[RMDB]
RNA sequence: GGGAACGACUCGAGUAGAGUCGAAAAUGCAAGGAUGUGCUGGGUGCCUGCAGUUGCAGCAGUGCCCUCCCCAGCUGGGGGAGGCUGACCUGAGACAGGCAACUCCUUUCCCAGGAGGGGAAGCCCUGCUCCAGCUUGUAGCAGGCAGGGGCCGAGGCGGAAUGAUAGCAUUCGUGCUAUCAUUCCGAAAAGAAACAACAACAACAAC
Reactivity to 2A3 in 0.01 (KOAc 150mM, MgCl2 10mM, bicine 150mM(pH8.5), 24C), signal-to-noise 1, nucleotides 027 to 156: u150g010c030a020a030g060g040a100u090g040u060g130c020u090g000g070g060u070g000c020c000u000g000c000a010g000u000u000g000c010a000g000c010a000g000u000g030c060c010c050u070c000c000c020c000a030g180c000u000g000g000g000g000g000a000g070g010c040u060g080a300c000c000u120g030a200g080a270c140a050g000g010c000a010a010c010u020c000c090u000u000u000c000c000c000a000g010g070a130g030g010g000g010a010a000g000c000c030c010u010g000c000u040c040c000a060g020c000u060u110g140u200a000g010c000a000g000g020c010a000g010g000g030g010c020c030g010a040g030g060

Chemical mapping of a 207-nucleotide RNA with 2A3.
The 2A3 profile rests on 797 reads.